[RMDB]
RNA sequence: GGGAACGACUCGAGUAGAGUCGAAAAGCUAAGUCUUUGUACGCCAGUUUCGUUUGCUCUGAUAUAACUUGCAAGGUCAAAUGAUCGCUUUCGUUGAAUAAAGUCAGCACACAUGUUUGGAAAAGGGCAUAUCGAGCGUAUUCGUACGCUCGAUAUGAAAAGAAACAACAACAACAAC
Reactivity to 2A3 in 0.01 (KOAc 150mM, MgCl2 10mM, bicine 150mM(pH8.5), 24C), signal-to-noise 3, nucleotides 027 to 126: g020c030u110a100a000g030u050c030u000u100u090g050u050a020c030g040c030c000a020g000u000u020u050c020g000u010u050u070g030c020u000c020u030g070a050u060a020u040a270a060c040u070u090g030c040a090a060g030g020u040c020a050a080a170u180g030a030u040c060g040c080u000u080u090c060g080u060u060g090a090a070u140a100a020a030g060u070c040a010g010c000a000c000a010c000a110u130g150u080u050u090g070g040a050a020a030a040g040g000g000
Reactivity to DMS in 0.01 (KOAc 150mM, MgCl2 10mM, bicine 150mM(pH8.5), 24C), signal-to-noise 4, nucleotides 027 to 126: g000c030u010a090a120g030u000c020u000u010u000g010u010a070c120g000c060c010a080g000u000u000u000c080g010u010u000u000g010c030u000c030u000g000a130u010a100u010a090a090c090u000u000g000c060a090a080g020g010u000c040a060a050a120u000g000a050u000c120g000c060u000u000u000c080g010u000u010g010a070a070u020a060a050a120g000u000c030a040g010c050a100c110a070c110a050u000g000u000u010u010g010g000a040a040a030a060g010g000g010